[RMDB]
RNA sequence: GGGAACGACUCGAGUAGAGUCGAAAAGCAUUGGGAAAGUUAAUCAAAAGUGCAUCAAAACUUUCGCUAAACGAAAUCAAAAUCGUUAUGAUGCACUUUUGACAUCGAUUAAGAUGAAUAGACACAAACGACAUCAUUUGUUCGCAAAUGAUGUCGUAAAAGAAACAACAACAACAAC
Reactivity to DMS in 0.01 (KOAc 150mM, MgCl2 10mM, bicine 150mM(pH8.5), 24C), signal-to-noise 2, nucleotides 027 to 126: g030c080a040u000u000g000g000g020a080a080a140g010u000u010a160a190u010c000a000a000a000a020g010u000g010c000a010u010c000a020a150a040a050c050u000u010u000c090g010c070u000a060a120a200c030g000a040a050a010u010c150a070a060a100a060u010c110g000u000u000a110u000g000a010u000g000c000a000c000u000u010u000u020g010a000c090a030u010c000g010a080u000u000a100a150g020a040u000g000a020a080u000a070g000a150c090a070c170a050a100
Reactivity to 2A3 in 0.01 (KOAc 150mM, MgCl2 10mM, bicine 150mM(pH8.5), 24C), signal-to-noise 1, nucleotides 027 to 126: g040c020a060u050u060g070g010g090a100a000a150g040u060u120a060a060u040c000a040a000a000a000g000u000g000c000a040u000c010a010a000a030a090c050u020u130u050c030g000c120u140a110a110a020c020g030a020a000a040u150c040a140a090a030a170u050c020g060u000u030a040u060g010a000u000g020c010a010c000u000u000u000u030g010a000c000a010u010c010g080a120u190u160a140a080g000a010u010g030a130a050u160a110g040a020c030a000c000a070a160